[RMDB]
Structure probing data (2A3) for a 207-nucleotide construct. It was measured as part of the RMDB library M2RFPK. 2A3 adducts were read by reverse transcription with SuperScript II with manganese.
RNA sequence: GGGAACGACUCGAGUAGAGUCGAAAAGAGCGAUUAGACACAGGGGUAGAGCUACAUAUUAGAUAGCUGUAUAAUCGUUCAAGUUACAUCAAAACAUCUUCAAUAUUUAUUACUUACUUUCCUUUCUGCCAGAGUACGGUAUUCGUACCGUACUCAACGUACCAGGGGAGUUCGCUCCCCUGGUACGAAAAGAAACAACAACAACAAC
Reactivity to 2A3 in 0.01 (KOAc 150mM, MgCl2 10mM, bicine 150mM(pH8.5), 24C), signal-to-noise 3, nucleotides 027 to 156: g020a000g000c000g000a010u000u010a010g030a040c030a000c000a100g000g000g050g050u040a040g020a030g020c000u000a000c010a030u150a100u120u130a070g180a240u020a000g070c010u020g000u040a070u010a010a010u000c000g000u000u000c010a020a010g030u080u090a080c030a070u080c050a070a050a090a110c010a100u070c070u230u130c110a130a120u130a140u180u170u150a120u120u130a030c030u100u010a040c000u040u060u050c000c010u000u070u040c030u060g090c060c070a060g000a000g000u000a000c000g000g000u000a010u000u110c130g000u010a000c010c000g000u000a010c000u000c000a000a000